[RMDB]
RNA sequence: GGGAACGACUCGAGUAGAGUCGAAAAUCGCAGCCUCCGACCUUAACAUUUGGAUCGGAAUUCUCUCGGCCAUGCUGAUGGGUAUGGGCUACGGUCUAGCAUUGGUGGCUGGCUUGUCCGAGGUACAGUCAACAGUCCUAUUCGUAGGACUGUUGACAAAAGAAACAACAACAACAAC
Reactivity to DMS in 0.01 (KOAc 150mM, MgCl2 10mM, bicine 150mM(pH8.5), 24C), signal-to-noise 3, nucleotides 027 to 126: u000c070g010c050a060g020c060c060u010c010c000g000a050c020c010u010u010a100a130c260a210u010u000u000g020g010a100u000c010g010g000a060a080u000u010c070u000c030u000c050g010g010c000c040a040u000g010c020u000g000a080u010g010g010g040u000a020u000g000g010g000c030u010a020c080g020g000u000c080u010a050g010c050a100u000u020g010g020u020g010g000c020u000g010g010c060u000u010g000u000c020c000g000a110g020g010u020a090c210a120
Reactivity to 2A3 in 0.01 (KOAc 150mM, MgCl2 10mM, bicine 150mM(pH8.5), 24C), signal-to-noise 2, nucleotides 027 to 126: u060c020g000c050a010g060c000c000u000c010c000g030a020c010c000u070u180a200a110c050a280u140u110u190g060g030a160u050c000g040g000a010a020u110u040c080u000c000u000c040g030g000c020c010a020u060g000c040u050g040a190u200g000g060g020u080a070u120g020g040g010c040u060a030c090g020g020u020c050u090a030g000c050a040u030u100g050g020u050g020g030c010u000g030g070c040u050u060g030u010c010c020g030a020g030g000u080a110c030a050

Source: RMDB library OK2TST, as collected in RNAgym. An RNA of 177 nucleotides, treated with DMS and 2A3 and read out base by base. Values are in units of 0.01, from 0 to 300, in steps of 10. The 2A3 profile rests on 2,404 reads. The reactions ran in a buffer of 150 mM KOAc, 10 mM MgCl2 and 150 mM bicine (pH 8.5), at 24 C. Values cover nucleotides 27 to 126.